[RMDB]
RNA sequence: GGGAACGACUCGAGUAGAGUCGAAAAUGUCCGAUGCCAGGUAUGCAAACUACAUAAUAGCAAAUGAUCAGAACAUUCGUCAUGCACACCAACCUAUUGUAGGACCAGUAGCUCCAGGGGACGACGAAGAAGCAACCUGAUUCGUCAGGUUGCUUCUAAAAGAAACAACAACAACAAC
Reactivity to 2A3 in 0.01 (KOAc 150mM, MgCl2 10mM, bicine 150mM(pH8.5), 24C), signal-to-noise 1, nucleotides 027 to 126: u060g030u000c010c000g030a000u080g040c010c000a020g050g050u030a060u100g100c010a030a150a000c000u140a020c070a080u240a240a080u040a180g010c000a040a230a070u050g020a090u120c060a060g050a090a030c010a170u110u070c030g010u000c010a000u110g010c020a010c000a000c050c010a040a070c010c010u080a130u040u220g060u070a050g000g090a010c040c010a050g030u100a000g000c020u020c000c000a030g060g000g020g030a020c030g020a020c020g070a110
Reactivity to DMS in 0.01 (KOAc 150mM, MgCl2 10mM, bicine 150mM(pH8.5), 24C), signal-to-noise 2, nucleotides 027 to 126: u000g010u000c020c000g050a110u000g000c030c050a120g030g020u000a020u000g030c080a030a180a090c100u030a040c060a060u010a100a100u000a030g030c100a080a070a020u000g010a090u000c080a100g010a060a140c050a100u000u010c070g010u000c020a030u000g000c060a110c000a220c050c040a060a110c080c010u000a060u010u000g010u020a140g000g010a100c080c010a100g000u010a050g010c060u010c060c030a120g030g010g010g020a100c070g000a040c080g040a110